RNA sequence: GGGAACGACUCGAGUAGAGUCGAAAAGAUAUGGAUGGACCAGGGAGCCUCCCUGUCGGAAACGACAGUCAGGCGAAGAACUGGUUCCAUCCUAAGUCAAAAGGCACAUCUGUUCGCAGAUGUGCCACCCUUAACAGUGCUUCGGCACUGUUAAGGGAAAAGAAACAACAACAACAAC
Reactivity to DMS in 0.01 (KOAc 150mM, MgCl2 10mM, bicine 150mM(pH8.5), 24C), signal-to-noise 2, nucleotides 027 to 126: g020a040u000a020u000g000g000a040u000g010g000a040c030c000a010g010g010g010a090g010c020c010u000c070c090c010u000g020u000c000g030g000a010a000a020c000g020a010c000a000g030u010c100a000g040g010c010g010a120a190g000a190a270c010u000g010g010u000u000c010c000a020u010c000c000u000a000a090g000u000c000a070a090a180a190g010g000c000a000c000a010u000c010u000g000u020u020c270g040c030a000g000a020u000g010u000g010c010c010a000
Reactivity to 2A3 in 0.01 (KOAc 150mM, MgCl2 10mM, bicine 150mM(pH8.5), 24C), signal-to-noise 2, nucleotides 027 to 126: g000a000u020a000u040g010g000a000u000g010g000a030c000c000a000g030g050g030a140g010c000c000u000c020c020c000u010g000u000c010g020g010a010a020a010c000g010a010c020a010g000u030c010a010g000g000c080g110a300a240g080a150a000c000u000g000g000u200u010c010c000a000u000c000c000u000a010a000g000u000c020a010a010a130a290g010g000c010a000c000a020u030c010u020g040u120u180c300g040c120a000g000a000u000g010u020g000c010c000a000
The record gives the reactivity of an RNA of 177 nucleotides to DMS and 2A3. The reactions ran in a buffer of 150 mM KOAc, 10 mM MgCl2 and 150 mM bicine (pH 8.5), at 24 C.